[RMDB]
RNA sequence: GGGAACGACUCGAGUAGAGUCGAAAAGCGCAAUAAGUCGCAGGUACUGGACCCGAAGCGGAGGUGACCUACCCUUGGCCAGGUUGAAGCAUGGGUAAAACCAUGUGGAGGACCGAACAGGUGAACGGUUGCGCAUAAUAUUCGUAUUAUGCGCAACAAAAGAAACAACAACAACAAC
Reactivity to DMS in 0.01 (KOAc 150mM, MgCl2 10mM, bicine 150mM(pH8.5), 24C), signal-to-noise 6, nucleotides 027 to 126: g020c030g010c030a120a130u020a100a110g010u030c030g020c050a100g010g020u030a050c060u000g020g000a100c030c020c020g010a110a060g000c080g010g010a100g000g000u000g010a050c040c030u010a160c060c010c010u000u010g010g020c060c050a140g010g000u000u000g000a230a230g000c000a000u000g010g010g010u010a060a080a110a210c020c000a020u020g010u000g000g000a180g000g000a020c000c000g020a070a080c100a090g000g000u010g000a120a070c160g010
Reactivity to 2A3 in 0.01 (KOAc 150mM, MgCl2 10mM, bicine 150mM(pH8.5), 24C), signal-to-noise 4, nucleotides 027 to 126: g020c010g010c020a030a190u210a230a050g070u170c020g000c030a000g010g030u030a030c060u130g070g070a060c000c010c000g060a100a020g030c080g040g040a030g010g040u030g070a070c010c000u060a070c010c000c000u070u150g040g000c010c020a040g030g000u010u040g010a010a010g000c000a000u010g000g000g030u030a020a040a000a010c000c000a000u000g010u020g000g000a040g020g130a010c000c000g010a070a050c050a060g010g040u040g030a090a020c070g050